[RMDB]
RNA sequence: GGGAACGACUCGAGUAGAGUCGAAAAGACGGAAAAGAUCGAACCUAAGAAGAUCAGGAAGUGUGAGCCGAAUCCUAGGGCUCCUAGGGACGCAUCGUCCGAUGCGAAAUAAACACUAACGUCGAAAAAUUACCCGUCACUUCGGUGACGGGUAAUUAAAAGAAACAACAACAACAAC
Reactivity to DMS in 0.01 (KOAc 150mM, MgCl2 10mM, bicine 150mM(pH8.5), 24C), signal-to-noise 2, nucleotides 027 to 126: g030a020c070g000g000a180a110a080a060g030a010u010c000g010a020a160c100c170u050a150a090g010a230a070g030a030u000c010a100g000g010a190a040g010u000g000u000g000a070g010c050c110g000a030a080u000c020c000u000a040g020g070g000c050u010c000c110u030a070g000g000g010a200c000g020c000a010u000c020g030u050c210c200g010a010u060g000c000g130a110a080a110u050a120a240a070c000a010c000u000a090a120c020g040u000c050g010a070a100a040
Reactivity to 2A3 in 0.01 (KOAc 150mM, MgCl2 10mM, bicine 150mM(pH8.5), 24C), signal-to-noise 2, nucleotides 027 to 126: g030a000c000g050g090a050a130a030a020g000a070u000c000g010a080a070c000c000u130a060a070g050a000a000g000a020u050c040a020g120g120a200a000g000u000g000u050g020a000g090c000c100g000a010a040u010c000c000u020a020g150g090g000c050u050c000c000u040a040g070g030g010a100c000g000c000a000u000c010g290u030c090c110g000a000u000g000c000g100a010a000a050u220a000a110a000c010a000c040u140a190a010c000g000u000c010g120a090a000a000